[RMDB]
RNA sequence: GGGAACGACUCGAGUAGAGUCGAAAAACAGAAAAAAGGAGUUUAAAUUAGAUUUGCAAACGGACGGUACUAAAUACCGUCACUUUUACAUCUAACUUAUCGUUAACUCUGCAAAAAGAAAACAAGAAAAACAAGCGUGAGUUCGCUCACGCUUGAACCACCUUAACCAGUUCGCUGGUUAAGGUGGAAAAGAAACAACAACAACAAC
Reactivity to 2A3 in 0.01 (KOAc 150mM, MgCl2 10mM, bicine 150mM(pH8.5), 24C), signal-to-noise 1, nucleotides 027 to 156: a000c030a010g110a020a090a010a000a000a040g040g000a040g000u030u030u100a080a030a010u020u010a070g000a030u050u040u240g060c060a010a020a000c050g020g000a020c030g000g000u050a030c030u250a090a100a000u060a020c010c000g000u000c000a020c000u000u000u000u030a000c000a000u020c010u050a010a000c010u070u040a030u130c030g110u040u090a010a010c000u030c010u050g020c040a040a110a090a060a000g020a000a010a020a000c040a000a110g150a120a110a030a000a030c000a000a000g000c000g000u000g000a000g010u070u170c180g000c050u000c000a000c000g010c040u000u000g000a000a000